Structure probing data (DMS and 2A3) for a 207-nucleotide construct. For 2A3, 1,876 sequencing reads were counted. 2A3 is a SHAPE reagent: it acylates the 2'-hydroxyl of flexible nucleotides of all four kinds. High DMS reactivity at an A or C suggests that its Watson-Crick edge is free.

RNA sequence: GGGAACGACUCGAGUAGAGUCGAAAAUUGAAUGUGUCUGAGCAGGGCCAGAGCCCUCCAGCAAGGCUCCUGGCAAGCCCAGCCUGCUGCCCUCAGCCUGACAUGUGGGAACAUGUGUCAGGAGACAAGUGUCCUGCACCCAGGGUGACUUAGUGCAAUCAUAGUGACGAUUCGUCGUCACUAUGAUAAAAGAAACAACAACAACAAC
Reactivity to DMS in 0.01 (KOAc 150mM, MgCl2 10mM, bicine 150mM(pH8.5), 24C), signal-to-noise 2, nucleotides 027 to 156: u000u010g010a070a060u000g010u000g010u010c000u000g000a110g000c050a090g020g030g040c000c020a090g000a100g010c010c010c000u000c040c090a190g000c160a080a050g010g000c000u010c080c080u000g010g010c000a110a290g010c030c010c000a120g020c040c030u020g010c010u000g000c030c040c020u000c060a200g020c000c000u010g040a060c000a030u000g060u000g010g010g050a140a220c010a020u000g000u000g040u000c000a000g020g000a080g020a080c040a050a100g000u000g000u000c040c010u010g000c040a070c070c030c010a230g010g030g020u030g010a090c030u010u030a110g030u000g010c000a260
Reactivity to 2A3 in 0.01 (KOAc 150mM, MgCl2 10mM, bicine 150mM(pH8.5), 24C), signal-to-noise 2, nucleotides 027 to 156: u140u150g030a050a080u120g080u030g020u050c040u070g000a010g020c000a020g020g090g000c010c010a020g010a020g000c040c010c020u070c040c060a080g000c030a040a030g010g000c000u080c040c030u030g000g000c010a030a040g010c010c020c000a010g000c000c000u000g010c010u030g010c030c010c010u070c030a050g030c010c000u000g000a000c000a010u010g000u010g030g010g080a070a020c000a010u010g010u000g010u000c000a000g020g000a010g010a000c030a050a020g000u000g010u060c020c020u040g010c040a080c030c070c000a010g010g020g020u060g000a020c020u030u120a080g050u090g120c060a050